[RMDB]
RNA sequence: GGGAACGACUCGAGUAGAGUCGAAAAGCCGCGGGUCGGGGGCUGUGGCAAUGGAAGAGGACGAUGCAGCGCCCACCAUCUCCAGGGCACAGGGUCAUGCCCUCCAGGAGAUGGCGGUCUAUGAGCAAAAGUAAAUCACAUUCGUGUGAUUUACUUUAAAAGAAACAACAACAACAAC
Reactivity to 2A3 in 0.01 (KOAc 150mM, MgCl2 10mM, bicine 150mM(pH8.5), 24C), signal-to-noise 4, nucleotides 027 to 126: g030c010c000g000c040g010g060g050u100c080g050g000g010g050g000c010u040g000u020g040g040c040a060a110u140g060g050a100a070g070a060g110g020a030c050g040a020u140g000c020a010g010c020g190c010c000c000a010c000c010a010u000c000u000c000c000a010g020g000g000c050a020c060a110g130g050g010u080c030a050u120g020c000c010c000u000c030c040a060g000g000a000g000a000u010g040g020c010g000g000u000c020u070a160u160g090a070g060c040a050
Reactivity to DMS in 0.01 (KOAc 150mM, MgCl2 10mM, bicine 150mM(pH8.5), 24C), signal-to-noise 6, nucleotides 027 to 126: g010c030c020g040c070g010g000g010u000c090g050g010g000g020g020c040u000g010u000g000g000c070a110a090u010g010g010a080a090g010a100g000g000a080c100g010a120u000g010c050a060g020c070g010c090c000c010a100c020c010a030u000c000u010c000c010a100g000g000g000c080a060c210a080g020g000g000u000c120a260u000g000c010c000c000u010c130c140a080g000g000a020g000a010u000g010g010c040g000g000u000c050u010a060u010g010a140g000c100a090
Record summary
The record gives the reactivity of an RNA of 177 nucleotides to 2A3 and DMS. In probing experiments dimethyl sulfate is read out at A N1 and C N3, which are open when not base-paired. For 2A3 the reverse transcriptase was SuperScript II with manganese. Values cover nucleotides 27 to 126.